This 177-nucleotide RNA was probed chemically with 2A3 and DMS. 2A3 adducts were read by reverse transcription with SuperScript II with manganese. For DMS the reverse transcriptase was MarathonRT. The reactions ran in a buffer of 150 mM KOAc, 10 mM MgCl2 and 150 mM bicine (pH 8.5), at 24 C.
RNA sequence: GGGAACGACUCGAGUAGAGUCGAAAAGGUGGUCGACAUAGGAGGUCAUAGGACCAGAGUCCAUAUUGGGGACAAAUGAGUCGAAUCUAUGACAGAACGGGAAACGAAGCCGGCUGCUUAGACAAAAUCAUCGCUCCAUGUUCGCGUGGAGUGAUGAAAAAGAAACAACAACAACAAC
Reactivity to 2A3 in 0.01 (KOAc 150mM, MgCl2 10mM, bicine 150mM(pH8.5), 24C), signal-to-noise 5, nucleotides 027 to 126: g080g020u040g010g020u030c020g010a060c040a070u250a050g040g060a040g000g040u000c000a000u010a000g030g000a000c000c010a010g010a010g020u000c010c020a010u050a200u230u300g180g020g010g000a010c010a000a290a020u050g000a050g010u000c000g030a020a020u040c000u000a000u000g000a000c000a010g040a090a030c050g030g010g060a030a050a010c020g030a030a000g020c010c000g000g000c000u000g000c000u020u010a010g020a040c050a020a080a000a060
Reactivity to DMS in 0.01 (KOAc 150mM, MgCl2 10mM, bicine 150mM(pH8.5), 24C), signal-to-noise 9, nucleotides 027 to 126: g010g020u000g000g030u000c010g010a050c030a050u030a170g000g010a170g000g000u000c010a030u000a020g010g000a020c000c010a020g010a300g010u000c010c000a110u040a190u020u040g030g010g000g000a010c000a020a110a140u000g000a080g010u000c010g010a110a140u050c000u000a010u000g000a020c010a090g000a090a090c110g000g000g010a080a100a140c060g000a090a120g000c000c010g010g000c010u000g000c030u000u020a050g010a090c140a050a060a080a100